This 177-nucleotide RNA was probed chemically with DMS and 2A3.
For 2A3 the reverse transcriptase was SuperScript II with manganese.
It was measured as part of the RMDB library OK1LIB.
RNA sequence: GGGAACGACUCGAGUAGAGUCGAAAAGAAAAACAGGAAGAACCCUUGCUCUCAUACACCCCAUUGUAUUGGGUGGCUUGUUCUUUUAUACAUUGUGGGCAGGUUACUUAGGAUGUCCUCAAAGAAAACUCCCAUUACGAUUCGUCGUAAUGGGAGUAAAAGAAACAACAACAACAAC
Reactivity to DMS in 0.01 (KOAc 150mM, MgCl2 10mM, bicine 150mM(pH8.5), 24C), signal-to-noise 3, nucleotides 027 to 126: g010a070a070a030a070a150c040a060g000g010a060a050g020a060a030c060c030c030u030u010g010c020u000c020u010c030a060u020a100c060a050c030c010c040c060a150u020u000g000u050a080u040u030g000g000g010u010g000g000c090u000u010g000u000u000c030u010u000u010u020a040u010a080c150a030u000u020g000u000g020g000g000c030a030g000g000u010u020a040c110u020u010a090g000g010a180u020g000u000c000c000u020c050a010a030a070g000a090a100a100
Reactivity to 2A3 in 0.01 (KOAc 150mM, MgCl2 10mM, bicine 150mM(pH8.5), 24C), signal-to-noise 3, nucleotides 027 to 126: g160a010a060a040a000a050c100a070g000g120a010a060g000a150a130c000c000c000u040u070g040c000u010c020u000c010a010u080a030c040a060c000c020c010c010a040u110u180g080u100a150u040u140g050g000g020u030g010g040c040u010u000g000u040u050c040u040u020u070u010a100u010a040c150a190u080u080g000u070g020g000g010c000a010g020g030u170u110a050c020u040u070a030g070g180a190u040g000u000c000c000u030c020a070a100a020g080a010a040a000